The record gives the reactivity of an RNA of 177 nucleotides to 2A3. The reactions ran in a buffer of 150 mM KOAc, 10 mM MgCl2 and 150 mM bicine (pH 8.5), at 24 C. Reactivities are given for positions 27 through 126.

RNA sequence: GGGAACGACUCGAGUAGAGUCGAAAACACUAAUGAUUCCGGAGAGAGAACUAUGCGCGCUAGCGGCUAACUAUCUACGUGUAACCGCAUUCGGUGUGCCAGGAUUCAUCCUUUUUGAAUGUGGUAAGGUGCACGAGGGAUUCGUCCCUCGUGCACCAAAAGAAACAACAACAACAAC
Reactivity to 2A3 in 0.01 (KOAc 150mM, MgCl2 10mM, bicine 150mM(pH8.5), 24C), signal-to-noise 2, nucleotides 027 to 126: c070a000c040u260a000a040u160g260a050u170u120c110c050g000g000a020g000a000g000a000g000a070a080c000u020a120u250g000c000g050c000g000c050u070a080g000c020g000g000c030u110a140a130c030u100a050u300c000u100a000c070g050u000g020u020a030a030c040c000g000c000a000u100u100c050g000g000u030g050u040g030c010c020a050g000g000a000u020u020c000a040u090c000c000u000u100u000u000u300g300a190a090u220g040u070g040g130u000a140a000